[RMDB]
RNA sequence: GGGAACGACUCGAGUAGAGUCGAAAAGAGUUGCGAUUGUUUUUCACACGUUGUGCGAUUUGAAUCCGGUGAACUACGGAGCUCGUAGCAUUCAUUGCCUUGCAAGCUGGCUGGCUGGGAAAGCAAACCACUGAUAUGGAUUCGUCCAUAUCAGUGGAAAAGAAACAACAACAACAAC
Reactivity to DMS in 0.01 (KOAc 150mM, MgCl2 10mM, bicine 150mM(pH8.5), 24C), signal-to-noise 4, nucleotides 027 to 126: g000a140g020u000u010g000c070g020a170u000u000g020u000u000u000u000u000c040a080c100a080c090g010u000u010g020u010g010c050g000a070u010u010u000g010a080a090u010c030c030g000g020u000g010a050a060c060u000a050c030g010g020a140g000c130u010c040g000u010a040g010c060a080u000u000c050a060u000u000g000c040c030u000u000g010c060a060a080g010c060u010g010g000c030u000g000g010c050u010g000g010g010a060a060a080g000c100a040a100a180
Reactivity to 2A3 in 0.01 (KOAc 150mM, MgCl2 10mM, bicine 150mM(pH8.5), 24C), signal-to-noise 3, nucleotides 027 to 126: g030a020g000u060u070g040c060g040a110u010u120g090u040u090u010u090u090c040a050c010a020c090g070u080u060g030u080g050c070g040a050u030u050u190g090a090a030u040c020c020g030g010u050g030a090a030c020u050a040c050g040g050a070g070c050u030c100g020u030a030g000c020a030u060u060c030a030u000u120g010c020c010u040u060g040c030a060a070g040c020u030g070g000c030u020g050g010c000u030g000g000g070a070a030a020g030c060a060a010a040
Structure probing data (DMS and 2A3) for a 177-nucleotide construct.
The 2A3 profile rests on 3,198 reads.
Source: RMDB library OK2TST, as collected in RNAgym.
The DMS profile rests on 5,228 reads.
The reactions ran in a buffer of 150 mM KOAc, 10 mM MgCl2 and 150 mM bicine (pH 8.5), at 24 C.